An RNA of 177 nucleotides, treated with DMS and 2A3 and read out base by base. The reactions ran in a buffer of 150 mM KOAc, 10 mM MgCl2 and 150 mM bicine (pH 8.5), at 24 C. It was measured as part of the RMDB library OK1LIB. DMS adducts were read by reverse transcription with MarathonRT.

RNA sequence: GGGAACGACUCGAGUAGAGUCGAAAAGAUGUAGCGAGCGUAAAUGUUAAAAUAUAGAACCUGACGAAGCGAUCGGCAAUCAAGAAGCUACCGGCGGAAAAUCGCGAGUUAGGGACGCCUAUAGAAAGGGAUUAAAAUUCUUCGGAAUUUUAAUCCCAAAAGAAACAACAACAACAAC
Reactivity to DMS in 0.01 (KOAc 150mM, MgCl2 10mM, bicine 150mM(pH8.5), 24C), signal-to-noise 2, nucleotides 027 to 126: g000a080u030g000u010a020g000c030g040a130g020c040g000u030a010a020a150u020g000u010u010a020a090a120a120u000a040u000a050g020a070a190c010c010u000g080a020c000g000a080a140g000c000g000a000u000c020g000g060c100a040a100u020c150a120a170g000a100a070g010c060u010a050c010c160g000g000c020g000g000a090a070a100a050u010c000g010c000g000a260g000u070u000a000g000g020g000a030c150g000c130c000u020a050u000a020g000a050a100a160
Reactivity to 2A3 in 0.01 (KOAc 150mM, MgCl2 10mM, bicine 150mM(pH8.5), 24C), signal-to-noise 1, nucleotides 027 to 126: g090a000u110g000u130a000g060c000g060a010g000c030g000u020a080a150a080u110g000u090u210a190a120a100a000u050a030u020a000g020a000a000c000c000u000g000a000c000g100a170a010g000c000g040a000u090c000g020g050c020a020a010u090c040a110a080g120a140a000g010c130u120a070c050c000g060g000c050g180g000a140a030a000a000u000c000g000c000g000a020g020u010u000a020g000g000g050a000c050g110c000c000u030a020u000a010g170a050a080a000